An RNA of 177 nucleotides, treated with DMS and read out base by base. Reactivities are rounded to 0.1 and cut off at 0 and 3. Conditions: 150 mM KOAc, 10 mM MgCl2 and 150 mM bicine (pH 8.5), 24 C.
RNA sequence: GGGAACGACUCGAGUAGAGUCGAAAAGAUAUGGAUCAGACCCAGCCGAGGUAGCGUUGAAAUCAACUGUUGUGUCGGAAACGACACAACAGUUGAUGGAGCUACGUAGGCUGCUGAUCCUAAGUCACUCAAUUCUUGAGUUCGCUCAAGAAUUGAGAAAAGAAACAACAACAACAAC
Reactivity to DMS in 0.01 (KOAc 150mM, MgCl2 10mM, bicine 150mM(pH8.5), 24C), signal-to-noise 2, nucleotides 027 to 126: g000a060u010a300u000g010g010a010u010c010a010g010a270c300c300c120a030g020c000c000g020a220g000g000u000a010g020c000g000u030u010g020a270a190a000u000c000a000a030c010u000g020u020u000g010u010g000u030c010g020g000a090a100a250c020g000a030c000a000c000a000a010c000a000g020u000u020g010a040u000g010g010a070g050c010u000a000c000g000u000a300g010g010c010u000g000c000u000g000a010u000c010c000u000a040a080g020u000c030a250